[RMDB]
RNA sequence: GGGAACGACUCGAGUAGAGUCGAAAACCUAAGAGUUUCGGAGAGUUCUUAGGUGGGGGUGUACUGGCUUCGACAGGGCGGGCAAAGGUGCGCAGGCAACUCGUCAGGCGAUCGACGUUAAUGAAGCGAACAAGGAUGAGUUCGCUCAUCCUUGUUCAAAAGAAACAACAACAACAAC
Reactivity to DMS in 0.01 (KOAc 150mM, MgCl2 10mM, bicine 150mM(pH8.5), 24C), signal-to-noise 2, nucleotides 027 to 126: c000c010u000a030a060g010a070g020u000u000u000c070g000g000a110g000a150g010u000u000c020u020u020a060g000g040u000g010g000g010g000g000u000g000u000a100c080u000g020g000c040u000u010c070g000a090c120a090g000g010g020c090g010g050g000c080a020a040a050g000g020u000g010c070g040c090a040g000g000c040a020a040c040u000c010g010u010c030a040g000g010c000g000a050u000c030g000a030c040g010u000u000a030a050u000g010a040a300g010c060
Reactivity to 2A3 in 0.01 (KOAc 150mM, MgCl2 10mM, bicine 150mM(pH8.5), 24C), signal-to-noise 2, nucleotides 027 to 126: c000c000u010a020a020g040a000g050u080u100u210c230g060g040a100g020a010g130u060u010c010u040u040a030g050g000u040g020g030g000g000g000u060g000u030a080c060u050g060g040c020u020u120c080g010a020c000a040g000g040g040c080g000g000g000c020a110a060a020g080g000u070g020c050g000c020a000g040g000c000a000a070c040u050c040g050u010c020a040g060g000c010g000a000u030c020g020a020c020g010u000u020a040a010u150g030a040a000g040c030

Structure probing data (DMS and 2A3) for a 177-nucleotide construct. Source: RMDB library RFMREP, as collected in RNAgym. The RNA was probed in 150 mM KOAc, 10 mM MgCl2 and 150 mM bicine (pH 8.5) at 24 C.